[RMDB]
RNA sequence: GGGAACGACUCGAGUAGAGUCGAAAAGAGGAGCCGGUGGAUCCUUGCCUGGAGAACAAAUGCCGUCGGGGCAGUCGCUGUGUGCCGAAUUCCAAUGCCAGGGACGGCUACCAGUGCAAGUGCAAGCGUUGCCUGUCUAGUUCGCUAGACAGGCAACAAAAGAAACAACAACAACAAC
Reactivity to DMS in 0.01 (KOAc 150mM, MgCl2 10mM, bicine 150mM(pH8.5), 24C), signal-to-noise 1, nucleotides 027 to 126: g010a050g000g030a070g010c030c050g000g010u000g010g000a070u000c050c010u000u000g020c020c010u000g000g010a200g010a090a170c280a100a110a070u010g010c000c000g000u000c030g010g000g030g010c030a060g000u000c040g000c040u000g010u010g000u000g000c090c010g010a030a140u000u000c100c050a070a150u000g000c010c000a120g000g000g000a010c020g000g000c000u000a020c000c000a060g000u010g010c040a030a040g010u000g030c190a070a130g000c300